RNA sequence: GGGAACGACUCGAGUAGAGUCGAAAAUUGACGGUGGGGUUGUCUUUACUCCAAUGAGCAUCGAACCACAGCGAAGUGGAUUCAUCGCAAAGAUGCAUUAGUCACGGAGCCACGUGGACAUGGCUAAAAUUACUCACUAUUUCGAUAGUGAGUAAUUAAAAGAAACAACAACAACAAC
Reactivity to 2A3 in 0.01 (KOAc 150mM, MgCl2 10mM, bicine 150mM(pH8.5), 24C), signal-to-noise 9, nucleotides 027 to 126: u080u080g060a020c050g050g030u050g000g020g010g010u030u030g030u040c000u030u110u040a020c020u000c010c000a020a110u170g040a030g010c010a020u050c060g050a090a050c010c000a010c010a020g060c050g060a110a010g010u020g000g040a040u040u050c010a020u030c020g030c140a210a120a040g010a010u020g000c020a030u050u130a070g070u070c000a000c030g020g000a010g000c010c010a130c090g010u040g020g010a020c020a060u070g040g000c000u030a080a070
Reactivity to DMS in 0.01 (KOAc 150mM, MgCl2 10mM, bicine 150mM(pH8.5), 24C), signal-to-noise 9, nucleotides 027 to 126: u000u000g010a080c090g010g030u000g010g000g010g010u000u000g010u000c050u000u000u000a100c040u000c010c040a070a110u010g010a090g010c010a030u000c090g010a140a120c020c010a020c040a110g010c080g010a220a140g010u000g000g000a090u000u000c040a050u000c060g010c140a080a090a130g000a020u000g010c120a110u000u000a080g010u010c020a030c050g000g000a300g010c010c040a050c170g020u000g000g010a100c080a080u000g000g010c020u000a040a050